[RMDB]
RNA sequence: GGGAACGACUCGAGUAGAGUCGAAAAGAUAUGGAACUCGCAGAGCGAUAAGCCUAGCUACAACACGUAUUCGGAAACGAAUACGUGUUGUAGCUGAGGCUUUUGACGCUUGAGGAGUUCCUAAGUCCUCAAAGACAGAGUUCGCUCUGUCUUUGAGAAAAGAAACAACAACAACAAC
Reactivity to DMS in 0.01 (KOAc 150mM, MgCl2 10mM, bicine 150mM(pH8.5), 24C), signal-to-noise 2, nucleotides 027 to 126: g010a170u000a300u000g000g010a000a000c000u000c010g000c080a300g010a030g000c000g030a150u010a030a020g010c000c000u000a030g010c000u000a000c000a020a010c000a000c010g010u000a010u000u000c000g020g000a150a100a200c000g040a020a000u000a000c000g030u000g000u000u000g000u000a000g010c010u000g000a010g000g000c010u000u000u000u000g010a160c050g000c000u000u010g000a300g000g000a050g000u000u000c010c010u010a010a080g000u000c060